[RMDB]
Structure probing data (2A3 and DMS) for a 177-nucleotide construct. Reactivities are given for positions 27 through 126.
RNA sequence: GGGAACGACUCGAGUAGAGUCGAAAAAGUGAACGUCACCAACUCGGCUGGAUUCCAAGCUGGUUGCCUGUCCUACGCUCAGCGCAACAACCGCAGACAUGCGACGGCCCCCGCCGGGACGCCAAUCUGUGCUAACUUCAUUCGUGAAGUUAGCACAAAAAGAAACAACAACAACAAC
Reactivity to 2A3 in 0.01 (KOAc 150mM, MgCl2 10mM, bicine 150mM(pH8.5), 24C), signal-to-noise 4, nucleotides 027 to 126: a000g170u130g040a110a050c070g100u040c020a020c060c020a050a040c020u020c040g020g000c020u060g040g010a160u100u140c050c000a060a000g010c030u050g080g010u010u050g000c000c020u020g010u040c000c010u090a050c060g010c030u080c050a050g010c010g020c040a050a050c010a070a050c090c040g000c010a020g020a090c030a050u130g020c010g010a040c010g060g000c000c010c020c000c000g000c020c000g000g010g020a040c020g000c040c010a040a060u020c060
Reactivity to DMS in 0.01 (KOAc 150mM, MgCl2 10mM, bicine 150mM(pH8.5), 24C), signal-to-noise 2, nucleotides 027 to 126: a120g000u000g000a210a170c050g020u010c030a070c000c020a000a180c050u000c030g020g000c000u000g010g000a180u000u010c050c090a130a060g000c080u000g000g010u050u010g000c020c010u000g000u000c090c060u010a100c100g000c030u060c030a070g000c060g040c050a120a060c110a050a070c270c030g000c060a060g030a040c190a080u000g020c030g020a170c020g000g000c020c050c020c000c020g010c020c000g000g000g000a080c060g000c000c050a050a040u020c080